[RMDB]
The record gives the reactivity of an RNA of 177 nucleotides to 2A3 and DMS.
The RNA was probed in 150 mM KOAc, 10 mM MgCl2 and 150 mM bicine (pH 8.5) at 24 C.
The 2A3 profile rests on 1,674 reads.
For 2A3 the reverse transcriptase was SuperScript II with manganese.
It was measured as part of the RMDB library OK2TRN.
RNA sequence: GGGAACGACUCGAGUAGAGUCGAAAACGCUGAAGCUGUCGAAGGCGCUGCAGGUCGACGUCGAGCAACUGUUCUCGGAGGGCCGUGACCGCGAGCUGAUCACGGUCACGCGCGCGUCGGAACGCAAGCCGACGUGACUAUUCGUAGUCACGUCGGCAAAAGAAACAACAACAACAAC
Reactivity to 2A3 in 0.01 (KOAc 150mM, MgCl2 10mM, bicine 150mM(pH8.5), 24C), signal-to-noise 1, nucleotides 027 to 126: c050g000c020u050g070a090a010g050c040u050g050u030c050g070a110a040g010g090c070g000c030u010g010c010a040g030g070u040c010g050a020c020g020u050c040g000a010g020c000a030a160c020u110g030u070u020c070u050c020g020g040a020g000g100g000c010c010g000u000g010a000c000c000g020c020g030a010g000c160u240g040a120u010c020a010c000g000g000u000c010a000c000g050c020g000c010g000c000g070u060c020g000g030a040a030c030g000c130a080a010
Reactivity to DMS in 0.01 (KOAc 150mM, MgCl2 10mM, bicine 150mM(pH8.5), 24C), signal-to-noise 2, nucleotides 027 to 126: c090g010c030u000g030a110a040g010c060u010g050u000c140g020a130a160g020g000c020g050c030u010g030c060a040g000g020u000c110g000a050c030g000u010c010g010a050g000c070a100a170c090u000g010u000u000c010u020c020g040g020a110g000g010g010c070c020g000u000g000a000c000c000g010c050g010a010g000c300u010g000a160u000c010a000c000g000g010u000c000a010c040g010c110g000c030g000c010g010u000c050g000g000a040a040c020g000c160a160a140